[RMDB]
RNA sequence: GGGAACGACUCGAGUAGAGUCGAAAAGAUAUGGACAUACUGGAGAUGAUGGAAACUUUGAUCCAAGAUUAUCGGAAACGAUAAUCUUGGGGAGUUUCCUACCAUCGAUGAAAGUAUGUCCUAAGUCCAACUUAGAAUUCUUCGGAAUUCUAAGUUGAAAAGAAACAACAACAACAAC
Reactivity to DMS in 0.01 (KOAc 150mM, MgCl2 10mM, bicine 150mM(pH8.5), 24C), signal-to-noise 4, nucleotides 027 to 126: g000a100u000a300u000g000g000a020c010a010u000a010c000u010g020g010a110g000a010u000g010a070u000g000g000a020a010a010c000u000u010u020g010a100u010c000c000a000a000g000a020u000u000a000u000c000g010g000a150a110a250c000g000a010u000a000a000u000c000u000u000g000g000g000g000a010g020u000u000u000c000c000u010a020c120c000a000u000c000g000a110u010g010a150a130a020g000u000a010u000g010u010c000c010u000a010a090g000u010c050
Reactivity to 2A3 in 0.01 (KOAc 150mM, MgCl2 10mM, bicine 150mM(pH8.5), 24C), signal-to-noise 3, nucleotides 027 to 126: g060a020u120a070u220g000g000a000c000a010u020a010c010u020g020g040a080g020a020u040g000a010u030g000g060a000a000a020c020u260u220u210g120a120u150c000c000a010a000g000a000u010u010a000u010c020g040g030a130a040a040c000g010a010u000a000a000u000c000u000u000g000g000g000g010a000g000u000u000u000c010c000u000a050c010c010a010u020c010g300a300u080g050a060a000a000g010u000a000u000g000u000c000c010u000a050a000g000u000c000